[RMDB]
RNA sequence: GGGAACGACUCGAGUAGAGUCGAAAAUGUGCAGUGGUGUAAUGUGGUUGUACACUUAUAGCAUUGGAGAAGCCUCAAGCCCCAUUGCCUAUCUGGUUUUUGUCACUACACUCACUAGUGAUUAUACGCGCGCCCAGCUUCGGCUGGGCGAAAAGAAACAACAACAACAAC
Reactivity to DMS in 0.01 (KOAc 150mM, MgCl2 10mM, bicine 150mM(pH8.5), 24C), signal-to-noise 3, nucleotides 027 to 129: u000g030u000g120c050a050g000u000g020g020u010g030u040a040a130u030g070u000g040g040u070u000g020u030a070c110a140c060u040u020a050u040a070g020c070a040u000u070g000g000a160g020a080a060g020c030c040u080c210a130a160g020c000c050c000c060a000u020u020g030c060c000u020a110u000c030u020g020g030u000u000u020u030u070g010u020c010a050c030u040a020c020a090c090u070c030a030c180u000a020g000u000g010a050u000u130a060u020a010c000g010c120g040
Reactivity to 2A3 in 0.01 (KOAc 150mM, MgCl2 10mM, bicine 150mM(pH8.5), 24C), signal-to-noise 3, nucleotides 027 to 129: u150g000u060g000c020a000g040u020g000g000u040g010u070a110a170u120g010u040g040g020u050u060g120u060a030c060a030c060u030u070a040u020a030g090c070a030u020u030g000g000a130g040a120a050g010c000c000u220c080a030a010g000c000c000c000c000a000u010u060g000c000c000u040a070u050c080u050g020g040u030u040u000u160u220g010u000c030a010c050u010a000c030a020c080u160c030a020c040u050a080g030u010g040a020u030u030a000u030a050c100g040c000g000
Chemical mapping of a 170-nucleotide RNA with DMS and 2A3. It was measured as part of the RMDB library 15KLIB. The 2A3 profile rests on 3,333 reads.